An RNA of 207 nucleotides, treated with DMS and 2A3 and read out base by base. The DMS profile rests on 4,057 reads. High 2A3 reactivity points to a flexible backbone, as in loops and unpaired stretches.
RNA sequence: GGGAACGACUCGAGUAGAGUCGAAAACACUGGUGAAUAGGGAUUGAUGAAUGGGAAGAGUUGAGUCAGACCAGUAAGCCCGUCCUGGGUUCCUUGAACAUGUUCCCAUGUAGGAGGUAAAACCAAUUCUGGAAGUGUCUAUGAACUUCCAUAAAUAGAGUGAAGUAUCAUUCGUGAUACUUCACUCAAAAGAAACAACAACAACAAC
Reactivity to DMS in 0.01 (KOAc 150mM, MgCl2 10mM, bicine 150mM(pH8.5), 24C), signal-to-noise 2, nucleotides 027 to 156: c060a100c080u010g030g020u010g000a070a120u000a090g020g010g030a060u000u000g030a120u010g000a080a050u000g000g000g030a060a100g000a120g000u000u000g020a110g010u000c050a190g000a130c060c020a110g020u000a160a200g010c030c010c040g040u010c090c040u000g000g010g020u000u010c010c030u010u010g000a070a010c080a080u010g000u000u000c030c020c010a120u000g030u000a060g020g010a030g030g010u000a060a050a080a090c050c050a020a200u020u010c080u000g010g000a020a020g020u000g000u010c140u000a220u000g000a080a030c020u000u000c000c000a010u010a040a030a080u010a150
Reactivity to 2A3 in 0.01 (KOAc 150mM, MgCl2 10mM, bicine 150mM(pH8.5), 24C), signal-to-noise 3, nucleotides 027 to 156: c060a020c040u060g000g020u080g040a060a060u050a140g060g000g040a040u050u070g030a040u110g030a060a060u100g040g020g000a040a060g040a040g030u100u120g030a030g030u030c030a010g040a040c010c000a000g020u020a050a010g020c000c010c000g060u140c040c040u070g000g020g030u070u080c010c010u040u110g040a090a000c020a030u070g020u060u010c010c000c020a010u050g030u030a040g000g070a000g000g020u080a040a020a000a030c010c010a040a140u180u040c050u070g010g000a010a010g010u010g070u070c050u180a130u160g000a020a000c000u010u020c000c010a000u120a040a030a020u210a010